This 177-nucleotide RNA was probed chemically with DMS and 2A3. Conditions: 150 mM KOAc, 10 mM MgCl2 and 150 mM bicine (pH 8.5), 24 C. DMS adducts were read by reverse transcription with MarathonRT. 2A3 adducts were read by reverse transcription with SuperScript II with manganese. Reactivities are given for positions 27 through 126. The 2A3 profile rests on 13,909 reads.
RNA sequence: GGGAACGACUCGAGUAGAGUCGAAAACUUGUCCUCAGUAGAGAUGCUACAGCAGUGGCUCGCCUCAGGCAGGGCAGGGCAGUGGGGUGGCUGUCCUGGGGGCAGGCAGUAGGGGCACGCUGACGUCGUUCACUCUCUUAUUCGUAAGAGAGUGAACAAAAGAAACAACAACAACAAC
Reactivity to DMS in 0.01 (KOAc 150mM, MgCl2 10mM, bicine 150mM(pH8.5), 24C), signal-to-noise 4, nucleotides 027 to 126: c060u000u000g020u010c010c000u000c040a060g020u000a090g010a130g010a090u000g020c010u000a040c040a090g010c070a090g020u000g010g010c010u000c070g010c030c010u000c070a060g020g030c150a090g010g000g020c020a050g010g000g010c030a070g010u000g010g010g010g010u000g000g000c030u000g000u000c020c030u000g000g010g000g010g010c030a040g000g000c050a060g010u000a070g000g000g000g000c030a060c080g010c050u000g010a090c120g000u010c110
Reactivity to 2A3 in 0.01 (KOAc 150mM, MgCl2 10mM, bicine 150mM(pH8.5), 24C), signal-to-noise 5, nucleotides 027 to 126: c010u020u050g020u020c000c010u020c030a050g040u110a030g040a010g010a060u100g040c030u040a050c030a100g090c040a090g090u050g090g020c000u020c060g060c000c000u080c050a050g160g000c040a020g030g020g000c050a070g010g010g000c030a050g070u080g020g090g000g030u060g020g010c010u030g020u070c000c020u020g020g000g020g020g000c020a020g030g000c020a010g020u090a030g010g020g000g000c050a010c050g030c050u050g020a070c050g060u120c030